[RMDB]
RNA sequence: GGGAACGACUCGAGUAGAGUCGAAAAAGUAUCAUCUCUGGGAGAAAGAAUUCCCCUGCUCUUAUACCGAUGAGGUCCAGAGGACUACUUGUUGCGGAACCAGCCAUCAAAUAUAAGAAGGACCUAAACCCAAAACACAUUUCGAUGUGUUUUGGGUAAAAGAAACAACAACAACAAC
Reactivity to DMS in 0.01 (KOAc 150mM, MgCl2 10mM, bicine 150mM(pH8.5), 24C), signal-to-noise 1, nucleotides 027 to 126: a080g010u000a060u010c070a090u010c020u000c000u000g010g020g000a030g000a120a100a080g000a100a260u020u000c010c000c010c040u000g030c060u000c000u020u020a090u000a110c090c070g000a170u030g010a150g010g020u000c010c030a050g000a020g010g010a090c150u010a070c060u000u000g000u000u000g000c110g010g000a090a090c070c020a080g010c000c020a040u010c030a060a060a090u010a070u030a040a070g000a050a050g000g010a100c050c040u020a040a090
This 177-nucleotide RNA was probed chemically with DMS. For DMS the reverse transcriptase was MarathonRT. The DMS profile rests on 884 reads. Reactivities are given for positions 27 through 126. Conditions: 150 mM KOAc, 10 mM MgCl2 and 150 mM bicine (pH 8.5), 24 C. It was measured as part of the RMDB library OK2TRN.